[RMDB]
Structure probing data (DMS) for a 177-nucleotide construct. It was measured as part of the RMDB library M2PK90.
RNA sequence: GGGAACGACUCGAGUAGAGUCGAAAAAAUAUGCUCGACAGGCUGCCUGUCCGACAGAGCAUUUAGAUCUUCUGAUCUUUCCCUGCAGCAUAUCGCUUAUGCAUCAAGCGAUUGUCGGAUCACACAAACGAGGGGAUACGUUCGCGUAUCCCCUCGUAAAAGAAACAACAACAACAAC
Reactivity to DMS in 0.01 (KOAc 150mM, MgCl2 10mM, bicine 150mM(pH8.5), 24C), signal-to-noise 1, nucleotides 027 to 126: a040a060u000a030u010g000c000u000c020g000a110c090a120g010g000c010u000g000c050c280u000g010u010c020c030g010a010c080a190g010a000g010c030a030u000u010u000a030g000a000u000c010u000u000c210u020g000a010u000c010u010u010u010c000c000c000u000g040c050a030g050c030a080u010a030u000c000g050c000u000u000a110u010g070c270a070u010c300a080a020g030c000g000a000u000u000g020u000c010g010g000a150u000c300a070c140a070c200a030a070